[RMDB]
RNA sequence: GGGAACGACUCGAGUAGAGUCGAAAAUGGAGAAGCAGGGCACGUGAGCGGCCAUCCAGUGUAGCUUCGCUGCGCGUCCAUGGCGGCGAACGCGCGUGAUCUGGAGUUUGGAUGGUCGUUCAUGUGUAACCCUAAUCGUGUUCGCACGAUUAGGGUUAAAAGAAACAACAACAACAAC
Reactivity to DMS in 0.01 (KOAc 150mM, MgCl2 10mM, bicine 150mM(pH8.5), 24C), signal-to-noise 2, nucleotides 027 to 126: u030g010g000a110g000a070a060g040c060a080g000g000g040c030a020c010g020u000g000a010g000c000g010g000c000c000a010u010c010c010a050g020u020g080u050a060g030c050u020u000c010g000c010u010g040c000g020c020g010u000c030c040a120u000g010g000c020g020g010c110g020a060a030c020g000c000g000c000g030u000g000a090u030c120u020g010g000a040g050u000u020u000g000g000a010u010g010g010u000c000g000u000u000c010a010u000g010u010g010u020
Reactivity to 2A3 in 0.01 (KOAc 150mM, MgCl2 10mM, bicine 150mM(pH8.5), 24C), signal-to-noise 6, nucleotides 027 to 126: u170g030g010a090g020a100a010g050c080a060g030g010g000c000a000c010g000u000g000a000g000c000g010g000c000c000a000u000c000c000a020g040u090g150u280a030g010c030u010u000c000g000c030u050g000c010g000c000g020u020c020c030a080u100g110g020c090g040g000c040g020a060a020c000g000c000g000c010g070u050g020a130u050c100u150g050g000a030g040u080u130u030g000g000a000u000g000g000u000c000g000u000u000c000a000u000g000u010g000u000
This 177-nucleotide RNA was probed chemically with DMS and 2A3. Conditions: 150 mM KOAc, 10 mM MgCl2 and 150 mM bicine (pH 8.5), 24 C. Values cover nucleotides 27 to 126.